[RMDB]
Chemical mapping of a 177-nucleotide RNA with 2A3 and DMS. The reactions ran in a buffer of 150 mM KOAc, 10 mM MgCl2 and 150 mM bicine (pH 8.5), at 24 C. 2A3 adducts were read by reverse transcription with SuperScript II with manganese. The data come from the RNA Mapping Database (RMDB), library OK2TRN.
RNA sequence: GGGAACGACUCGAGUAGAGUCGAAAAAUCACUGAUCGCGCCGAGCGCGGCCCGGCCUGCUGCUGCAGAGUACCGAUCCAGGAUCAGACGAUCGUCUCGAUCAGGCCGGUACAGGAUCGAUCCAGGCCGUCCUUUGCAGAUUCGUCUGCAAAGGACGAAAAGAAACAACAACAACAAC
Reactivity to 2A3 in 0.01 (KOAc 150mM, MgCl2 10mM, bicine 150mM(pH8.5), 24C), signal-to-noise 2, nucleotides 027 to 126: a000u090c080a050c050u160g050a100u110c000g030c020g060c070c180g130a090g090c130g000c050g000g040c020c000c000g010g000c000c000u030g030c010u030g000c050u120g020c080a010g010a040g120u020a090c040c000g030a060u050c000c010a110g140g000a110u100c030a000g050a090c050g040a170u170c210g090u000c000u040c070g010a030u020c020a000g000g070c020c000g000g000u060a030c020a030g050g000a050u070c040g000a000u000c010c050a030g040g000c030
Reactivity to DMS in 0.01 (KOAc 150mM, MgCl2 10mM, bicine 150mM(pH8.5), 24C), signal-to-noise 2, nucleotides 027 to 126: a060u000c090a150c040u010g000a080u000c030g070c040g000c040c060g000a100g000c140g030c060g020g020c040c030c050g000g010c020c020u000g000c080u000g000c120u000g040c040a110g010a140g030u000a030c050c010g000a080u000c030c020a170g000g000a020u020c050a070g020a040c070g020a130u000c160g010u000c000u010c130g020a060u000c000a060g000g000c300c000g000g020u010a000c020a090g010g000a070u010c040g000a100u000c120c070a070g020g000c080